RNA sequence: GGGAACGACUCGAGUAGAGUCGAAAAAAUCUGGUGUUACUACUCGCUCGAUGCCGACAGCGUGGAUCAGCUUCUGACACCCCGCGCAUGGGUCGCGGGUGAUGUAGAGCGUCGCUCCGAUGAGGUCUUCUCGGUCGCAGUAGAGCAAUGCGUUGGCAUCUGACAAGUUUUUCGAAACUUGUCAGAUAAAAGAAACAACAACAACAAC
Reactivity to DMS in 0.01 (KOAc 150mM, MgCl2 10mM, bicine 150mM(pH8.5), 24C), signal-to-noise 1, nucleotides 027 to 156: a020a070u000c060u000g030g020u020g020u000u000a120c020u000a060c050u000c000g030c000u030c020g000a050u010g000c060c040g050a050c050a100g030c030g050u020g000g010a130u000c050a120g010c040u010u000c100u010g000a100c030a090c070c050c000c010g010c020g020c040a300u020g030g000g020u000c010g080c050g000g010g030u000g000a060u000g000u000a160g000a060g040c000g040u010c050g040c030u010c000c010g000a100u000g000a120g010g000u000c040u010u000c070u030c090g010g000u000c050g000c120a070g020u010a150g000a040g010c010a030a050u000g020c020g020u030u000g010g000c110
Reactivity to 2A3 in 0.01 (KOAc 150mM, MgCl2 10mM, bicine 150mM(pH8.5), 24C), signal-to-noise 2, nucleotides 027 to 156: a000a000u130c100u090g000g000u030g030u040u030a150c030u000a010c010u000c020g010c010u010c030g040a080u080g010c000c000g080a070c030a040g040c060g090u050g050g000a040u110c080a050g000c000u200u090c010u180g060a010c000a000c000c000c000c000g000c000g040c080a200u300g110g040g140u210c020g000c000g010g010g000u010g020a110u020g000u010a010g000a000g000c010g040u070c070g000c020u000c030c000g020a070u060g030a010g070g030u070c090u150u050c010u050c020g030g010u030c050g000c070a030g030u130a020g010a000g000c010a010a000u100g010c020g020u020u010g040g010c010
The record gives the reactivity of an RNA of 207 nucleotides to DMS and 2A3. Reactivities are given for positions 27 through 156. The 2A3 profile rests on 1,199 reads. The RNA was probed in 150 mM KOAc, 10 mM MgCl2 and 150 mM bicine (pH 8.5) at 24 C.